[RMDB]
RNA sequence: GGGAACGACUCGAGUAGAGUCGAAAAUCGGCUCCCAAGCGGUCUGACGCCCUGUCACGGUUUCCCUGCGGAGCUGUGCCCGGGGCCCCGACGGAUUCCGGUCCGUCGCAGGGGUGGCCCUCCACCUUAUGCACAUAAGAUUCGUCUUAUGUGCAUAAAAAGAAACAACAACAACAAC
Reactivity to 2A3 in 0.01 (KOAc 150mM, MgCl2 10mM, bicine 150mM(pH8.5), 24C), signal-to-noise 9, nucleotides 027 to 126: u100c010g020g010c010u010c010c000c010a020a020g090c080g030g030u040c050u070g050a040c040g060c030c020c050u100g020u040c010a020c080g030g010u030u140u080c010c000c040u080g030c150g020g000a010g000c020u020g010u020g030c030c030c010g000g010g000g000c010c000c000c000g000a000c000g000g010a010u080u030c050c170g150g010u000c010c000g000u010c010g000c060a080g020g020g010g010u070g040g020c010c000c000u030c020c010a060c010c000u020
Reactivity to DMS in 0.01 (KOAc 150mM, MgCl2 10mM, bicine 150mM(pH8.5), 24C), signal-to-noise 6, nucleotides 027 to 126: u020c050g000g000c050u010c000c010c050a140a130g010c100g000g010u020c040u010g000a100c080g010c080c050c070u020g010u010c040a070c090g000g000u020u010u010c020c010c060u010g000c160g000g000a030g000c010u000g010u000g010c050c050c040g010g010g000g010c010c020c060c010g000a020c000g000g010a030u000u010c190c130g000g000u000c000c010g000u000c000g010c160a120g000g000g000g020u010g000g020c050c030c090u010c040c040a060c090c060u000